[RMDB]
Structure probing data (DMS and 2A3) for a 207-nucleotide construct. The data come from the RNA Mapping Database (RMDB), library M2RFPK. The RNA was probed in 150 mM KOAc, 10 mM MgCl2 and 150 mM bicine (pH 8.5) at 24 C. Reactivities are given for positions 27 through 156. For DMS the reverse transcriptase was MarathonRT.
RNA sequence: GGGAACGACUCGAGUAGAGUCGAAAAUAAGCCAAAGGGAUGUCCCGACCGGAGGCCGACAAUCCAGGGAACCGGAUGUCAUCACGUUGUUGCAGCACCAGAUGGCAUCUUAAAUCCGAUCUGCAAAAAAAGUCUUACACCUUCGGGUGUAAGACAACAUCUAGACAGUCUUCGGACUGUCUAGAUGAAAAGAAACAACAACAACAAC
Reactivity to DMS in 0.01 (KOAc 150mM, MgCl2 10mM, bicine 150mM(pH8.5), 24C), signal-to-noise 1, nucleotides 027 to 156: u010a050a060g030c060c020a070a300a240g000g000g020a130u000g010u020c000c070c050g000a180c000c000g000g000a300g000g020c030c010g000a170c090a050a180u000c030c060a100g020g030g000a140a090c030c090g050g010a030u000g010u000c000a030u020c000a170c130g030u000u000g000u000u010g010c010a170g000c030a050c020c050a090g000a010u000g000g040c000a000u000c010u010u010a060a140a220u010c030c040g030a090u030c030u040g040c050a000a000a080a090a020a150a110g010u000c000u000u010a000c000a000c030c000u010u010c300g030g060g020u000g030u000a000a000g000a010c000a020a090
Reactivity to 2A3 in 0.01 (KOAc 150mM, MgCl2 10mM, bicine 150mM(pH8.5), 24C), signal-to-noise 1, nucleotides 027 to 156: u070a020a030g000c010c000a000a000a010g020g000g010a020u020g010u010c000c000c000g010a000c010c000g010g000a010g000g000c000c010g010a040c050a150a060u060c120c100a020g000g000g000a030a020c040c030g010g010a000u000g010u000c000a000u000c020a010c250g060u060u030g050u060u030g010c020a010g010c020a020c040c030a070g000a000u000g000g010c000a000u000c010u000u000a000a040a020u150c080c030g070a120u070c010u020g010c040a000a010a010a000a000a120a060g000u000c000u000u000a000c000a000c000c010u020u080c200g110g000g000u000g000u000a000a000g000a000c000a000a000
DMS (dimethyl sulfate) methylates the pairing face of unpaired adenines and cytosines.